[RMDB]
RNA sequence: GGGAACGACUCGAGUAGAGUCGAAAAGACAAAGACAUACUCAUUCUCUGCUGCAAACUUGGCAUAGCUCUGCUUUGCCUGGGGCUAUUGGGGGAAGUUGCGGUUCGUGCUCGCAGGGCUCUCACCCUUGACUCUUUUAAUAGCUCUUCUGUGCAAGCCCCCAAGAUAGUUUCGACUAUCUUGGGGGAAAAGAAACAACAACAACAAC
Reactivity to 2A3 in 0.01 (KOAc 150mM, MgCl2 10mM, bicine 150mM(pH8.5), 24C), signal-to-noise 2, nucleotides 027 to 156: g050a030c050a030a160a040g070a040c070a070u140a060c010u030c050a060u120u040c040u000c020u050g040c000u000g060c050a050a170a120c100u110u100g030g000c030a030u080a030g010c020u040c130u300g020c000u070u040u030g020c000c000u020g000g000g000g000c010u030a040u050u090g010g000g000g000g000a010a090g050u050u070g040c050g010g020u010u040c020g030u040g020c010u040c020g120c110a090g000g040g010c030u040c020u030c030a010c010c000c040u020u030g020a030c000u020c000u010u060u010u060a040a080u020a050g000c000u030c000u110u030c030u070g090u050g010c020a040a040g040